This 207-nucleotide RNA was probed chemically with DMS and 2A3. Values cover nucleotides 27 to 156. The reactions ran in a buffer of 150 mM KOAc, 10 mM MgCl2 and 150 mM bicine (pH 8.5), at 24 C. The DMS profile rests on 2,465 reads. The 2A3 profile rests on 5,795 reads.
RNA sequence: GGGAACGACUCGAGUAGAGUCGAAAAGAACACGUACACACACACUCACACGUGAUCGUACGUGAGAGUUCACUCGUACGAGAUCGUGUACGUGAUCUCACACGAACGUACUCACUCGUACUCGUUCGUGUUCGAUCUCACACGAGAACGUGUACACUAUCACGGUAGGUUUCGACCUACCGUGAUAAAAAGAAACAACAACAACAAC
Reactivity to DMS in 0.01 (KOAc 150mM, MgCl2 10mM, bicine 150mM(pH8.5), 24C), signal-to-noise 2, nucleotides 027 to 156: g010a120a090c050a050c060g030u020a020c000a030c040a250c130a140c130a140c080u010c070a090c110a050c030g020u030g010a200u020c070g010u020a020c000g120u020g020a030g030a020g060u010u020c160a070c020u000c000g010u020a020c060g000a040g100a110u000c010g020u020g010u020a000c060g060u000g010a080u030c010u000c120a090c070a090c000g020a060a000c030g060u030a020c070u000c090a110c190u020c180g000u000a030c020u020c040g010u000u000c000g040u000g020u020u000c010g040a020u000c010u000c070a100c030a130c050g000a060g000a120a060c060g030u000g000u040a080c220a110c050
Reactivity to 2A3 in 0.01 (KOAc 150mM, MgCl2 10mM, bicine 150mM(pH8.5), 24C), signal-to-noise 6, nucleotides 027 to 156: g050a040a020c030a000c060g000u020a010c020a000c000a000c000a010c000a010c030u050c030a040c010a010c100g010u000g050a090u060c050g030u080a010c010g010u030g020a080g020a010g050u170u210c110a060c050u060c020g020u040a010c050g000a000g000a060u090c080g010u000g010u030a030c080g020u010g020a020u000c020u010c000a030c000a000c010g010a040a000c000g020u050a010c030u080c180a090c070u110c090g020u040a020c050u060c140g020u030u010c010g000u000g010u010u020c020g010a050u020c010u020c040a020c000a010c100g000a010g030a170a070c040g000u020g020u100a030c050a020c100